[RMDB]
RNA sequence: GGGAACGACUCGAGUAGAGUCGAAAACGGCGGACGGGUGAGUAACACGUGGGUAACCUGCCCAUAAGACUGGGAUAACUCCGGGAAACCGGGGCUAAUACCGGAUAACAUUUUGAACCGCAUGGUUUUAUAGAGAUAUUUUCGAAUAUCUCUAUAAAAAAGAAACAACAACAACAAC
Reactivity to 2A3 in 0.01 (KOAc 150mM, MgCl2 10mM, bicine 150mM(pH8.5), 24C), signal-to-noise 7, nucleotides 027 to 126: c010g030g000c010g010g020a050c020g010g000g050u040g040a090g030u090a100a030c030a020c140g020u030g000g020g000u030a050a110c010c030u090g010c000c000c000a020u040a040a060g060a050c030u030g000g000g000a000u010a030a010c000u000c010c000g000g000g000a030a030a020c000c000g000g000g000g010c000u010a020a010u100a150c000c000g010g000a040u080a080a030c030a050u070u080u070u230g080a080a030c010c010g030c100a070u070g070g000u000u020
Reactivity to DMS in 0.01 (KOAc 150mM, MgCl2 10mM, bicine 150mM(pH8.5), 24C), signal-to-noise 7, nucleotides 027 to 126: c110g000g020c010g010g010a110c080g010g010g010u010g010a130g000u020a080a110c140a080c100g000u000g000g010g000u000a090a110c180c170u020g010c010c000c000a040u000a100a130g010a150c030u010g000g000g000a040u000a120a210c010u000c000c000g000g000g000a090a120a160c000c010g000g000g000g010c020u000a120a080u030a050c010c010g000g000a150u020a090a140c060a050u010u000u020u020g000a050a090c010c010g000c060a040u020g010g000u000u010